[RMDB]
RNA sequence: GGGAACGACUCGAGUAGAGUCGAAAAGAUAUGGAACAUAGCAAGAAGGUCUGAUGGCGAAGAACUCGCUCGGAAACGAGCGAGGGAGCCAUCGACCUUUGAUGACCUAUGUUCCUAAGUCAAAACUACAAUUGAUGCUUCGGCAUCAAUUGUAGAAGGUCUAUUACUCGUUCGCGAGUAAUAGACCAAAAGAAACAACAACAACAAC
Reactivity to 2A3 in 0.01 (KOAc 150mM, MgCl2 10mM, bicine 150mM(pH8.5), 24C), signal-to-noise 2, nucleotides 027 to 156: g010a030u060a010u150g000g010a000a000c010a000u000a010g010c050a150a300g000a010a030g020g010u150c220u300g040a010u010g020g000c010g130a210a030g010a040a020c000u000c010g000c000u000c030g020g050a050a030a050c010g010a000g010c000g000a000g000g010g010a010g000c000c000a000u000c000g000a000c000c000u000u000u010g000a000u020g010a000c010c000u000a000u000g010u010u000c000c000u000a090a010g010u010c020a000a000a070a130c000u010a000c000a000a010u000u010g000a000u000g000c040u070u090c300g100g000c000a000u000c000a000a000u000u010g000u000a000g010a020a030